Source: RMDB library OK3TST, as collected in RNAgym. An RNA of 207 nucleotides, treated with 2A3 and DMS and read out base by base. DMS adducts were read by reverse transcription with MarathonRT. For 2A3, 447 sequencing reads were counted.
RNA sequence: GGGAACGACUCGAGUAGAGUCGAAAAGGCAUUAGCACGCGUAAUGUCAAUUCCGACCAGGAACGUGUCGAAGCCAUUAUUGAAGAUCGUAGGGCUUGGUUAAAAGAACAAAAUACAGCCGAUGAUGUGCGUAGAGAACUUUAUGAUAAGAUUGUAGUGGAAGUAUGGAUUUCGAUCCAUACUUCCAAAAAGAAACAACAACAACAAC
Reactivity to 2A3 in 0.01 (KOAc 150mM, MgCl2 10mM, bicine 150mM(pH8.5), 24C), signal-to-noise 1, nucleotides 027 to 156: g000g000c030a030u000u140a080g040c090a010c170g090c030g140u080a000a000u020g050u070c030a000a060u110u100c030c040g030a070c090c000a030g000g050a040a040c130g060u160g030u170c090g060a030a000g000c000c020a030u060u090a120u060u100g010a050a010g000a090u050c040g050u120a090g000g010g010c020u000u180g040g000u030u040a070a070a010a010g070a060a090c110a070a090a080a000u300a040c030a030g030c020c060g010a010u070g010a030u020g030u040g000c020g030u060a020g070a000g000a160a000c030u000u030u210a090u190g050a020u020a080a070g090a080u000u080g000u000a120g090
Reactivity to DMS in 0.01 (KOAc 150mM, MgCl2 10mM, bicine 150mM(pH8.5), 24C), signal-to-noise 1, nucleotides 027 to 156: g020g070c000a050u000u010a070g020c020a120c140g020c080g000u000a110a090u000g020u020c000a060a190u000u000c010c040g020a070c050c010a230g030g000a050a020c070g000u000g000u000c110g000a050a120g030c010c000a150u000u010a060u010u010g000a070a050g030a090u010c040g000u000a090g010g010g020c030u010u000g030g010u000u030a030a100a030a120g030a030a300c050a080a130a070a100u000a080c020a150g000c070c030g040a090u010g010a010u000g000u000g040c050g070u000a110g000a140g010a040a060c090u000u000u000a120u010g000a210u010a080a090g010a170u000u000g000u010a110g010